The data come from the RNA Mapping Database (RMDB), library TTRDES. Chemical mapping of a 177-nucleotide RNA with DMS and 2A3. For DMS, 1,897 sequencing reads were counted. The RNA was probed in 150 mM KOAc, 10 mM MgCl2 and 150 mM bicine (pH 8.5) at 24 C. For 2A3 the reverse transcriptase was SuperScript II with manganese. In probing experiments dimethyl sulfate is read out at A N1 and C N3, which are open when not base-paired.

[RMDB]
RNA sequence: GGGAACGACUCGAGUAGAGUCGAAAAGAUAUGGACGUGCAAGACAUGCGACCUCGGGACUCGGAAACGAGUCAUUCGCAACAGCUUGACACGUCCUAAGUCAAACUACUAGCUUCGGCUAGUAGAACCUGGUAAUACCGUUCGCGGUAUUACCAGGAAAAGAAACAACAACAACAAC
Reactivity to DMS in 0.01 (KOAc 150mM, MgCl2 10mM, bicine 150mM(pH8.5), 24C), signal-to-noise 3, nucleotides 027 to 126: g000a050u000a300u010g000g010a010c010g010u000g000c020a020a000g000a060c080a260u000g000c000g050a020c300c110u000c290g030g000g030a020c000u010c000g000g000a060a120a210c010g010a010g010u000c000a070u000u000c010g020c030a010a050c300a160g000c020u000u000g000a110c000a010c000g000u000c010c000u000a000a080g010u000c030a200a130a180c000u000a000c000u000a000g000c000u000u000c230g030g010c000u000a000g000u010a010g000a040a150
Reactivity to 2A3 in 0.01 (KOAc 150mM, MgCl2 10mM, bicine 150mM(pH8.5), 24C), signal-to-noise 2, nucleotides 027 to 126: g050a010u040a010u100g000g000a010c000g020u000g000c000a010a040g010a170c080a170u160g000c000g040a070c050c140u210c190g300g200g030a010c000u000c020g010g010a050a060a010c020g010a000g000u010c000a010u050u000c000g030c000a080a270c090a300g070c020u050u070g150a250c010a010c000g000u000c000c000u020a010a000g000u000c020a000a080a110c010u000a000c000u000a000g020c010u030u070c300g200g000c010u000a000g010u000a000g000a000a030